An RNA of 177 nucleotides, treated with DMS and 2A3 and read out base by base. Values cover nucleotides 27 to 126. For 2A3, 8,579 sequencing reads were counted. DMS adducts were read by reverse transcription with MarathonRT. Reactivities are rounded to 0.1 and cut off at 0 and 3. The reactions ran in a buffer of 150 mM KOAc, 10 mM MgCl2 and 150 mM bicine (pH 8.5), at 24 C.

RNA sequence: GGGAACGACUCGAGUAGAGUCGAAAACGGUCGAAAUUCGUUUCGACCGAAUAUGCUAGCUGAGCACAGCUGCAAUGCUAAGCUGAAAGGCAGCUGCAAGCGCGAGUUCGGCGUUCGCGCCGAACAAUACUCCUUUUACGUUCGCGUAAAAGGAGUAAAAAGAAACAACAACAACAAC
Reactivity to DMS in 0.01 (KOAc 150mM, MgCl2 10mM, bicine 150mM(pH8.5), 24C), signal-to-noise 6, nucleotides 027 to 126: c020g010g010u000c000g010a010a010a030u000u010c180g020u000u000u000c000g010a010c000c000g000a030a010u010a090u000g010c020u000a070g010c030u010g010a160g020c080a160c050a020g020c010u000g000c030a090a100u010g010c060u010a090a100g000c040u000g000a070a110a140g010g010c010a010g010c020u010g010c090a100a090g000c100g010c130g000a150g010u000u000c000g010g010c000g020u000u010c180g010c010g020c000c000g000a010a000c010a080a100
Reactivity to 2A3 in 0.01 (KOAc 150mM, MgCl2 10mM, bicine 150mM(pH8.5), 24C), signal-to-noise 5, nucleotides 027 to 126: c010g000g010u000c000g010a020a000a010u150u090c180g050u040u020u010c000g000a000c000c000g000a000a020u100a020u030g030c070u100a090g010c020u030g050a030g060c060a020c020a150g010c010u030g000c040a070a070u160g000c020u110a110a060g020c010u020g080a180a050a010g120g010c000a000g010c000u010g010c030a090a030g030c050g010c030g060a090g050u000u000c010g000g010c010g030u020u040c200g010c000g000c040c000g010a000a000c000a000a000